An RNA of 177 nucleotides, treated with 2A3 and DMS and read out base by base.

[RMDB]
RNA sequence: GGGAACGACUCGAGUAGAGUCGAAAACUGGCCGCGAGGGUGUCGUAGCCGCGGUCGUAGUGUGAGACUCCGACACCUGAUCCGCCAGCGCAGAGAUGUGAGAUCAACGGACGGAAGGCGACGGUGCAGCUACGCGUACAUUCGUGUACGCGUAGCUAAAAGAAACAACAACAACAAC
Reactivity to 2A3 in 0.01 (KOAc 150mM, MgCl2 10mM, bicine 150mM(pH8.5), 24C), signal-to-noise 3, nucleotides 027 to 126: c010u020g050g030c010c020g030c110g060a040g020g040g010u020g000u000c000g040u060a020g020c010c000g000c010g000g050u220c100g030u060a140g030u040g030u060g090a230g050a120c000u000c050c020g000a000c000a000c000c000u010g030a070u000c000c040g010c010c000a010g000c000g020c020a030g030a020g040a130u060g080u060g060a120g000a070u060c040a030a080c070g030g040a000c000g000g040a060a020g000g030c030g020a040c030g000g010u050g080c030
Reactivity to DMS in 0.01 (KOAc 150mM, MgCl2 10mM, bicine 150mM(pH8.5), 24C), signal-to-noise 2, nucleotides 027 to 126: c020u000g000g010c000c140g020c030g030a290g030g000g000u000g000u000c000g010u000a120g020c090c160g010c030g000g030u000c120g060u010a050g000u050g050u030g010a100g000a110c050u000c020c000g010a030c000a020c000c000u020g000a290u000c040c280g060c010c010a110g000c040g000c060a070g010a070g060a060u040g000u000g000a070g000a040u000c080a040a150c100g000g000a060c000g020g000a040a050g000g000c030g000a080c080g000g020u020g020c170
Notes
For DMS, 2,261 sequencing reads were counted. Conditions: 150 mM KOAc, 10 mM MgCl2 and 150 mM bicine (pH 8.5), 24 C. For 2A3, 1,610 sequencing reads were counted.